[RMDB]
RNA sequence: GGGAACGACUCGAGUAGAGUCGAAAACGCCUUGGGUAGCUGGCGUCAUUAAGUCAGGCCUUUUGAGUGGGAAGGUUAAACUCUAGAACUGUCACAGUGGUAGCCUUGAGCUGUGAUGGAUUUUAAAGGCUACUGAUAUCCAAAGCCUGCCCAUGGGGCAGAAUAUGUCGUUCGCGACAUAUUCUGCAAAAGAAACAACAACAACAAC
Reactivity to 2A3 in 0.01 (KOAc 150mM, MgCl2 10mM, bicine 150mM(pH8.5), 24C), signal-to-noise 4, nucleotides 027 to 156: c060g050c000c010u040u040g040g000g000u040a020g020c040u040g030g000c020g040u060c030a090u090u230a090a050g030u070c060a050g090g170c000c000u000u000u020u020g010a010g000u010g020g010g020a240a070g020g000u060u140a030a000a000c000u010c000u000a000g010a100a070c070u020g000u010c000a000c000a010g010u000g020g070u050a010g030c000c020u010u030g020a010g000c000u000g000u000g010a000u010g010g010a040u050u040u080u270a040a020a020g000g030c010u010a020c010u000g010a010u020a050u110c030c020a110a020a110g020c020c020u020g000c010c010c010a020u080g020g010g030
Reactivity to DMS in 0.01 (KOAc 150mM, MgCl2 10mM, bicine 150mM(pH8.5), 24C), signal-to-noise 2, nucleotides 027 to 156: c060g020c010c010u000u000g020g010g050u000a050g010c070u000g010g000c060g000u030c110a090u020u010a090a180g000u000c020a060g030g000c020c010u000u000u030u010g000a060g020u000g000g000g030a050a080g000g000u000u000a020a030a020c020u000c020u000a040g000a060a140c070u000g000u010c010a020c020a040g020u000g010g030u000a040g020c020c010u010u000g010a300g010c020u000g000u010g010a080u000g040g000a090u000u000u000u000a030a030a050g040g000c010u000a270c080u000g000a190u000a040u000c030c020a050a070a090g010c040c070u000g010c000c000c010a170u010g010g000g010

Structure probing data (2A3 and DMS) for a 207-nucleotide construct. For 2A3, 2,829 sequencing reads were counted. For DMS the reverse transcriptase was MarathonRT. For 2A3 the reverse transcriptase was SuperScript II with manganese. Source: RMDB library RSTRND, as collected in RNAgym.